[RMDB]
RNA sequence: GGGAACGACUCGAGUAGAGUCGAAAAUUGGUUAGUUACCUUUCUGAACGCUGUAAUGUUAUUGCUGAUUCUAAGUCCUUCACACUUAUCUUUGGUGGCGUAGCUUACGCCUACUUUGGAUGUGAGGCAUUAGUGCAACGUUCGCGUUGCACUAAUGAAAAGAAACAACAACAACAAC
Reactivity to 2A3 in 0.01 (KOAc 150mM, MgCl2 10mM, bicine 150mM(pH8.5), 24C), signal-to-noise 1, nucleotides 027 to 126: u050u030g040g000u030u030a080g030u030u100a130c010c000u010u070u050c050u110g080a050a000c060g000c050u080g040u100a040a100u080g120u270u150a080u120u180g090c020u000g070a210u100u070c040u090a100a070g040u000c010c000u070u090c040a040c000a010c080u180u130a040u040c010u020u050u050g000g000u000g000g000c000g020u030a030g090c050u120u030a000c010g000c020c000u000a010c000u030u040u050g030g010a020u040g000u010g020a010g030g000
Reactivity to DMS in 0.01 (KOAc 150mM, MgCl2 10mM, bicine 150mM(pH8.5), 24C), signal-to-noise 4, nucleotides 027 to 126: u000u010g000g010u000u000a090g010u010u020a070c020c010u000u000u000c030u000g010a080a090c130g010c050u000g000u010a080a070u010g020u000u010a070u000u010g020c030u010g010a120u000u000c060u000a050a070g010u010c040c000u000u000c020a030c010a120c250u010u010a070u000c020u000u000u000g010g030u000g000g010c010g020u000a050g020c300u010u010a010c000g010c000c010u010a010c010u000u000u000g000g000a030u000g020u000g000a020g000g010

Source: RMDB library 15KREP, as collected in RNAgym. Chemical mapping of a 177-nucleotide RNA with 2A3 and DMS. The RNA was probed in 150 mM KOAc, 10 mM MgCl2 and 150 mM bicine (pH 8.5) at 24 C. Values cover nucleotides 27 to 126. For DMS, 7,922 sequencing reads were counted.